[RMDB]
RNA sequence: GGGAACGACUCGAGUAGAGUCGAAAAAUACUAUUUGUGAUUCCAAGACACCCUUCCGCCAACAAGAUGAAUAUGUUGGUCUUACGUAUUUUGAGCUCCUUGAUGUGGUGGAGAACAGAUGUCACCACGGAGAAUUAGAGUUCGCUCUAAUUCUCCGAAAAGAAACAACAACAACAAC
Reactivity to 2A3 in 0.01 (KOAc 150mM, MgCl2 10mM, bicine 150mM(pH8.5), 24C), signal-to-noise 8, nucleotides 027 to 126: a000u200a050c130u120a170u190u090u140g090u050g070a080u080u070c040c030a050a030g030a020c020a060c030c010c000u060u050c010c010g010c000c000a010a010c000a040a020g080a170u220g050a100a050u150a090u140g040u020u020g040g020u020c020u070u070a020c020g030u050a070u030u070u040u070g060a050g020c030u030c020c010u060u060g040a120u120g080u040g030g010u020g010g020a030g020a030a030c040a040g100a090u100g070u060c020a010c060c020a030
Reactivity to DMS in 0.01 (KOAc 150mM, MgCl2 10mM, bicine 150mM(pH8.5), 24C), signal-to-noise 4, nucleotides 027 to 126: a030u000a040c050u000a040u010u030u030g000u000g010a120u000u000c030c030a100a110g000a050c090a070c040c030c040u000u000c020c070g000c010c010a050a060c080a040a070g010a110u030g010a090a070u020a050u010g000u010u000g020g020u010c090u010u000a120c120g010u010a010u000u010u020u010g010a100g010c090u010c050c010u000u010g000a100u030g020u000g020g010u000g020g010a060g000a050a090c160a110g010a090u020g010u000c030a080c060c080a110
The record gives the reactivity of an RNA of 177 nucleotides to 2A3 and DMS. For DMS the reverse transcriptase was MarathonRT. The DMS profile rests on 8,540 reads.